[RMDB]
This 177-nucleotide RNA was probed chemically with 2A3 and DMS.
RNA sequence: GGGAACGACUCGAGUAGAGUCGAAAAACAGGCACCCACCACCAUGCCCGGCUAAUUUUUUGUAUUUUUAGUAGAGGUGGUUUCACCAUGUUAGCCAGGAUGGUCUCGAUCUCCUGACCUUGUGAUCGCAAAAAUGUAAGUUCGCUUACAUUUUUGCAAAAGAAACAACAACAACAAC
Reactivity to 2A3 in 0.01 (KOAc 150mM, MgCl2 10mM, bicine 150mM(pH8.5), 24C), signal-to-noise 1, nucleotides 027 to 126: a010c010a000g030g000c040a030c010c000c010a010c030c000a000c010c000a040u170g130c010c000c000g000g000c050u010a080a010u040u090u000u120u180u140g180u130a260u100u100u120u140u220a050g080u040a060g010a050g100g000u070g040g000u000u140u090c030a010c020c010a030u100g030u020u030a000g000c000c000a010g020g020a050u030g000g060u010c040u030c010g030a030u020c010u040c000c000u050g080a090c010c000u000u090g050u100g080a060u090c050
Reactivity to DMS in 0.01 (KOAc 150mM, MgCl2 10mM, bicine 150mM(pH8.5), 24C), signal-to-noise 2, nucleotides 027 to 126: a090c050a070g020g020c100a120c050c050c020a130c090c080a050c020c020a050u000g000c020c010c050g030g020c010u010a010a010u000u000u010u010u010u040g000u000a020u000u010u010u000u010a110g030u010a060g000a150g010g030u010g000g000u000u000u000c020a040c010c000a110u000g000u000u000a030g030c010c010a030g020g000a060u000g010g010u010c060u000c090g000a040u000c050u020c010c020u010g000a100c060c040u010u000g030u000g000a060u000c140
Values cover nucleotides 27 to 126.
It was measured as part of the RMDB library OK2TRN.
2A3 adducts were read by reverse transcription with SuperScript II with manganese.
The DMS profile rests on 2,446 reads.